This 177-nucleotide RNA was probed chemically with DMS and 2A3.
The RNA was probed in 150 mM KOAc, 10 mM MgCl2 and 150 mM bicine (pH 8.5) at 24 C.
DMS adducts were read by reverse transcription with MarathonRT.
For DMS, 1,134 sequencing reads were counted.
Values are in units of 0.01, from 0 to 300, in steps of 10.
[RMDB]
RNA sequence: GGGAACGACUCGAGUAGAGUCGAAAAGAACCGCCAUCUACUUUGCAUCGUUCUUUUGUGUACAAAUUUUUAAAGGAGCGGUGUUGAUGGCACUACGGUUUUUUGGUGGAGAAUUGAUGAUUGGUCACGAUGACUCCUGUUUCGACAGGAGUCAUCGAAAAGAAACAACAACAACAAC
Reactivity to DMS in 0.01 (KOAc 150mM, MgCl2 10mM, bicine 150mM(pH8.5), 24C), signal-to-noise 1, nucleotides 027 to 126: g010a010a000c000c040g080c000c010a040u010c000u020a120c300u120u080u110g030c010a000u000c000g000u010u000c000u000u000u060u000g010u080g010u100a090c300a110a100a130u000u020u120u000u000a000a000a000g000g010a000g040c040g010g000u000g010u000u000g000a000u000g000g000c090a130c230u040a050c260g020g000u000u010u000u050u000u000g000g060u040g040g060a040g000a170a040u010u040g000a040u000g000a020u000u020g000g000u000c080a200
Reactivity to 2A3 in 0.01 (KOAc 150mM, MgCl2 10mM, bicine 150mM(pH8.5), 24C), signal-to-noise 1, nucleotides 027 to 126: g010a000a000c000c000g000c050c000a040u000c000u020a050c080u140u220u200g000c000a010u000c010g000u030u000c000u000u000u000u050g030u080g090u020a050c040a050a280a280u030u120u070u180u240a090a030a040g000g080a000g050c020g020g030u000g030u020u040g000a020u000g000g030c000a000c000u090a050c050g010g020u130u000u000u000u070u090g080g030u100g010g070a090g050a090a210u070u010g020a020u010g010a030u150u090g000g000u090c040a000